Source: RMDB library M2PK50, as collected in RNAgym.
Chemical mapping of a 177-nucleotide RNA with DMS and 2A3.
Values cover nucleotides 27 to 126.
RNA sequence: GGGAACGACUCGAGUAGAGUCGAAAACCUACUGCCUUCGGGCAGUAGGAAACAGGAGCUUCUACAACCUGAAUAACUAGAUGAAACAUCUAGUGUAGAAGAAAAGGAACCGCUUCGGCGGUUCCAACACUGUUACAUUCUUCGGAAUGUAACAGUGAAAAGAAACAACAACAACAAC
Reactivity to DMS in 0.01 (KOAc 150mM, MgCl2 10mM, bicine 150mM(pH8.5), 24C), signal-to-noise 2, nucleotides 027 to 126: c010c000u000a010c000u000g010c000c000u000u010c180g020g000g020c010a010g000u000a010g000g000a030a080a110c050a040g010g000a080g050c060u010u000c000u000a010c010a100a190c050c040u000g010a190a170u010a060a090c010u000a010g010a020u000g000a170a140a160c120a010u000c000u010a000g000u010g010u000a010g000a000a030g010a100a100a130a130g010g030a020a000c000c000g040c000u000u020c260g010g050c010g000g010u000u000c010c010a050a100
Reactivity to 2A3 in 0.01 (KOAc 150mM, MgCl2 10mM, bicine 150mM(pH8.5), 24C), signal-to-noise 2, nucleotides 027 to 126: c000c000u010a000c010u010g020c000c000u050u050c170g050g000g030c010a010g010u000a000g000g000a040a020a000c030a010g130g010a040g040c020u010u000c000u020a030c000a070a090c030c020u060g070a110a100u140a070a010c010u000a000g000a020u040g140a290a300a050c050a030u010c000u010a020g020u010g000u030a010g010a060a020g040a010a110a030a040g010g000a010a010c000c010g040c030u030u070c210g100g000c000g000g020u000u000c000c000a020a010
The reactions ran in a buffer of 150 mM KOAc, 10 mM MgCl2 and 150 mM bicine (pH 8.5), at 24 C.